[RMDB]
RNA sequence: GGGAACGACUCGAGUAGAGUCGAAAACAAUUUCAUUUGGAAGAUCAUUAGGAGAUGCACAGAAUUCAGAUUGCCUCCUUACAUAGAAAGAGCUUUUAACACACUUGCCUCUGGCUCUCUGCGGGGGUACUACGGGCAGGUUCGCCUGCCCGUAGUAAAAAGAAACAACAACAACAAC
Reactivity to DMS in 0.01 (KOAc 150mM, MgCl2 10mM, bicine 150mM(pH8.5), 24C), signal-to-noise 1, nucleotides 027 to 126: c100a120a140u000u010u000c100a160u000u030u000g000g020a100a120g000a100u040c170a100u000u000a030g040g000a000g010a040u040g030c150a040c110a120g080a140a110u000u030c300a130g030a040u000u000g000c030c000u000c000c000u000u000a000c260a130u000a130g000a060a200a020g000a030g000c000u000u000u030u000a100a020c090a010c160a050c090u000u010g110c100c020u040c030u000g000g050c020u000c060u000c050u000g000c100g000g000g000g050g000
Reactivity to 2A3 in 0.01 (KOAc 150mM, MgCl2 10mM, bicine 150mM(pH8.5), 24C), signal-to-noise 3, nucleotides 027 to 126: c070a020a150u120u170u120c120a170u170u210u130g080g030a060a040g020a080u150c050a100u100u080a030g020g000a050g010a040u190g040c050a090c020a110g170a190a150u220u070c050a020g080a220u140u040g010c020c000u000c000c000u040u010a110c050a100u140a050g110a040a110a010g010a030g100c010u030u050u110u250a130a030c100a000c000a000c030u090u090g010c020c000u040c040u040g060g000c000u010c000u000c040u140g000c000g000g000g000g000g000